Annotation: Conditions: 150 mM KOAc, 10 mM MgCl2 and 150 mM bicine (pH 8.5), 24 C. Chemical mapping of a 177-nucleotide RNA with DMS and 2A3. For DMS the reverse transcriptase was MarathonRT. DMS (dimethyl sulfate) methylates the pairing face of unpaired adenines and cytosines. It was measured as part of the RMDB library OK2TST.
[RMDB]
RNA sequence: GGGAACGACUCGAGUAGAGUCGAAAAUGAACGAUAACCAGAAAUCAAAGGAAUCAUGUGAGUUUUCAUCGGAAAAGUGUAAAACUUGUCAAGAGAAAAAUGAUUCUACAUGUGGAUUUAAUCCAGACAUAAAUGCGUGAUUCGUCACGCAUUUAUGAAAAGAAACAACAACAACAAC
Reactivity to DMS in 0.01 (KOAc 150mM, MgCl2 10mM, bicine 150mM(pH8.5), 24C), signal-to-noise 4, nucleotides 027 to 126: u030g000a130a110c140g010a100u000a070a170c040c040a200g010a090a100a060u000c090a080a090a190g010g010a040a020u000c000a000u000g010u000g020a070g010u010u000u010u000c000a040u010c030g000g020a060a120a030a080g010u000g000u010a030a040a050a030c010u000u000g000u000c110a060a150g000a130g010a010a040a070a140a040u000g000a020u000u000c020u000a130c190a090u020g000u000g020g000a030u000u020u000a080a070u000c010c000a050g020a210
Reactivity to 2A3 in 0.01 (KOAc 150mM, MgCl2 10mM, bicine 150mM(pH8.5), 24C), signal-to-noise 2, nucleotides 027 to 126: u080g040a060a040c030g050a070u040a100a070c020c000a040g060a080a120a030u170c080a120a050a030g000g000a010a010u020c010a000u080g010u020g050a030g020u040u000u000u040c050a060u080c030g070g060a080a090a010a030g020u010g020u110a060a090a050a050c000u020u050g080u100c040a070a050g070a050g100a180a030a030a000a000u010g010a000u010u040c000u070a030c020a100u190g010u070g110g020a020u010u170u200a040a040u000c000c000a010g030a060